[RMDB]
RNA sequence: GGGAACGACUCGAGUAGAGUCGAAAAGCAACUCGGUUCGCCGAGUUGCAAAUAAAAUCAGCGGUAAAUUCGAGGCGUAAAUUACCGCUCAACGCCUCGAUAAAAGUCUUCAGUUCGCUGAAGACAACUUACUAGUGGUCUUCGGACCACUAGUAAGAAAAGAAACAACAACAACAAC
Reactivity to 2A3 in 0.01 (KOAc 150mM, MgCl2 10mM, bicine 150mM(pH8.5), 24C), signal-to-noise 2, nucleotides 027 to 126: g000c000a010a000c000u000c000g010g060u060u080c190g040c060c000g020a000g010u010u010g000c000a010a000a010u030a000a010a010a070u100c090a030g010c000g070g010u080a110a180a180u110u040c000g000a010g020g000c000g000u010a020a300a050u160u100a030c000c020g020c010u010c010a010a000c000g000c000c000u000c010g000a000u040a000a050a000a000g010u000c000u000u000c000a010g020u040u040c110g020c080u010g000a000a000g000a000c000a000a060
Reactivity to DMS in 0.01 (KOAc 150mM, MgCl2 10mM, bicine 150mM(pH8.5), 24C), signal-to-noise 2, nucleotides 027 to 126: g000c010a000a020c000u000c000g010g030u000u010c240g010c000c010g000a020g000u000u000g010c020a000a020a030u000a130a080a110a170u010c120a060g000c030g010g010u000a100a080a160u010u010c020g020a000g020g010c030g000u010a010a060a080u010u010a150c040c030g000c030u000c090a080a060c000g000c000c000u000c000g040a030u010a070a070a080a100g000u000c000u000u010c000a000g000u000u020c230g030c010u000g010a010a010g000a010c000a060a140